An RNA of 177 nucleotides, treated with 2A3 and DMS and read out base by base. DMS adducts were read by reverse transcription with MarathonRT. Reactivities are given for positions 27 through 126. For DMS, 197,956 sequencing reads were counted. The reactions ran in a buffer of 150 mM KOAc, 10 mM MgCl2 and 150 mM bicine (pH 8.5), at 24 C.
RNA sequence: GGGAACGACUCGAGUAGAGUCGAAAAGUGAUGUGCGACAGUUUACUGGAGGCUGCUUUGCGGUCGAGUCGUAUGACCGGCCAUAUGCGACGAUGUACCUGAGGCCGGAUAGGUACUGCACAUCUGAGGCUUCUUCCGUGUUCGCAUGGAGGAGGCCAAAAGAAACAACAACAACAAC
Reactivity to 2A3 in 0.01 (KOAc 150mM, MgCl2 10mM, bicine 150mM(pH8.5), 24C), signal-to-noise 9, nucleotides 027 to 126: g140u070g000a010u000g000u010g000c020g050a040c060a050g010u050u090u100a070c030u030g030g020a020g020g000c000u010g000c030u060u120u280g060c020g000g010u010c010g030a040g030u020c010g020u090a070u130g050a060c020c000g020g010c010c000a080u100a020u170g060c030g010a010c010g020a040u030g020u080a050c000c010u060g020a040g010g000c010c010g000g000a030u060a020g020g000u020a020c000u010g000c000a010c000a000u000c000u000g020a020
Reactivity to DMS in 0.01 (KOAc 150mM, MgCl2 10mM, bicine 150mM(pH8.5), 24C), signal-to-noise 9, nucleotides 027 to 126: g020u020g000a010u000g010u000g010c010g000a130c090a060g010u020u020u010a060c050u010g010g010a170g000g000c010u010g000c020u020u020u040g010c030g010g010u000c010g010a120g010u010c050g010u010a060u020g000a080c020c000g000g000c010c010a090u030a030u010g010c080g000a070c050g000a160u030g020u010a040c100c020u010g000a150g000g000c000c010g000g000a110u020a030g000g010u010a030c040u010g010c010a010c010a010u000c000u000g000a180